Conditions: 150 mM KOAc, 10 mM MgCl2 and 150 mM bicine (pH 8.5), 24 C. Chemical mapping of a 207-nucleotide RNA with 2A3 and DMS. For 2A3, 890 sequencing reads were counted. For DMS, 2,346 sequencing reads were counted. It was measured as part of the RMDB library ARCHII.
RNA sequence: GGGAACGACUCGAGUAGAGUCGAAAAAACUAAUUACGCUCUUGCUGCUUAAUCGAAUCAUAGUAGAUUAGCUUAAUCCAGGCACCAGGUGCCAGGACGAGACAUCACUCGGAAGCUGUUGCUCCGAAGCAUUCCGGUUCAGUGGUGCAGUUACAUCCGCAUAAAUCAACUUCGGUUGAUUUAUGCGAAAAGAAACAACAACAACAAC
Reactivity to 2A3 in 0.01 (KOAc 150mM, MgCl2 10mM, bicine 150mM(pH8.5), 24C), signal-to-noise 2, nucleotides 027 to 156: a000a000c130u190a190a100u240u070a070c120g030c060u050c020u100u130g030c030u020g000c000u120u160a000a010u030c010g030a040a010u100c150a130u120a100g010u000a010g000a000u030u040a010g000c000u020u100a040a010u050c020c020a040g000g010c000a010c040c140a050g250g000u000g010c010c000a010g010g010a000c000g000a020g010a010c000a000u030c000a000c000u070c010g010g020a030a020g050c030u080g150u190u120g040c030u040c050c030g000a020a000g000c030a230u000u000c020c000g040g000u110u140c040a000g010u000g000g010u000g000c010a010g020u010u070a040c020a100u010c000
Reactivity to DMS in 0.01 (KOAc 150mM, MgCl2 10mM, bicine 150mM(pH8.5), 24C), signal-to-noise 2, nucleotides 027 to 156: a000a070c070u000a110a060u000u000a090c100g020c070u000c050u020u010g000c050u010g020c030u020u030a050a110u000c100g000a170a170u010c120a110u000a150g020u000a150g000a050u000u010a040g020c060u010u000a100a060u010c010c020a090g050g060c010a030c030c120a060g000g050u010g030c020c010a010g040g010a040c030g000a200g030a100c020a040u000c000a040c010u000c030g020g020a050a140g010c040u010g010u020u000g010c040u000c060c120g010a110a100g000c010a120u000u010c020c030g080g030u010u000c190a070g030u020g050g070u000g020c010a120g030u000u000a090c060a230u010c000